RNA sequence: GGGAACGACUCGAGUAGAGUCGAAAAUUUGAGGACAUCAUGUUUUAGUGUCGCUGCACUUACAACUGGUUUGACUUUUCAAACUGUGCGGCCUGGCAAUUUUAACCAAGACUUCUAUGAUUUCGUGAAAACUAUCGGUUCGCCGAUAGUAAAAGAAACAACAACAACAAC
Reactivity to DMS in 0.01 (KOAc 150mM, MgCl2 10mM, bicine 150mM(pH8.5), 24C), signal-to-noise 7, nucleotides 027 to 129: u030u040u040g020a070g000g000a090c130a060u010c010a080u030g050u000u000u000u000a040g000u010g050u030c000g000c040u030g000c020a000c000u030u060a090c240a080a120c260u060g000g000u000u030u020g000a030c300u070u060u060u050c000a040a050a010c000u030g040u000g000c000g060g000c080c160u000g000g000c040a010a000u020u000u010u020a050a120c040c060a090a080g020a070c070u000u080c030u040a080u000g040a140u030u030u010c030g000u070g000a040a020a030
Reactivity to 2A3 in 0.01 (KOAc 150mM, MgCl2 10mM, bicine 150mM(pH8.5), 24C), signal-to-noise 9, nucleotides 027 to 129: u100u030u100g050a040g030g040a020c020a070u040c020a030u100g130u010u050u030u070a070g010u020g010u020c040g000c020u010g000c010a000c000u100u200a090c080a180a070c120u090g020g020u010u010u030g050a060c070u060u140u120u080c010a000a010a010c020u030g000u000g010c010g000g010c000c050u100g000g000c010a030a040u040u050u050u080a050a020c020c010a040a030g040a070c040u080u030c050u120a100u090g070a220u060u060u050c060g030u070g090a060a030a010